About this RNA
Chemical mapping of a 170-nucleotide RNA with DMS and 2A3. Source: RMDB library 15KLIB, as collected in RNAgym. DMS adducts were read by reverse transcription with MarathonRT. Conditions: 150 mM KOAc, 10 mM MgCl2 and 150 mM bicine (pH 8.5), 24 C.
[RMDB]
RNA sequence: GGGAACGACUCGAGUAGAGUCGAAAAACGUUGAUAUGGAUUUACUCCGAGGAGACGAACUACCACGAACAGGGGAAACUCUACCCGUGGCGUCUCCGUUUUACGAGUAAGUCCUAAGUCAACAUGCCGAUCUUCUAGUUCGCUAGAAGAAAAAGAAACAACAACAACAAC
Reactivity to DMS in 0.01 (KOAc 150mM, MgCl2 10mM, bicine 150mM(pH8.5), 24C), signal-to-noise 7, nucleotides 027 to 129: a070c150g000u000u000g020a000u020a070u000g000g000a000u000u000u010a000c020u000c000c000g030a080g040g020a050g000a000c000g030a050a020c080u100a240c050c010a020c000g030a030a160c120a130g010g000g000g000a000a000a040c000u020c020u000a130c270c200c020g000u010g000g000c000g030u040c010u000c010c020g020u030u030u030u050a080c300g010a020g000u000a000a000g020u000c010c010u000a000a060g010u010c010a010a020c040a080u050g000c030c020g040a080
Reactivity to 2A3 in 0.01 (KOAc 150mM, MgCl2 10mM, bicine 150mM(pH8.5), 24C), signal-to-noise 4, nucleotides 027 to 129: a000c080g000u000u000g000a000u000a000u030g000g000a000u000u000u000a000c000u000c010c020g030a110g010g000a010g030a000c010g010a020a020c090u240a070c110c000a000c000g020a040a020c030a100g000g000g000g000a000a000a000c000u000c000u010a030c010c020c000g000u000g000g000c000g000u000c000u000c000c000g000u030u040u020u010a000c000g000a000g000u000a000a000g000u000c000c000u000a000a000g000u000c000a000a000c000a030u090g060c000c010g060a110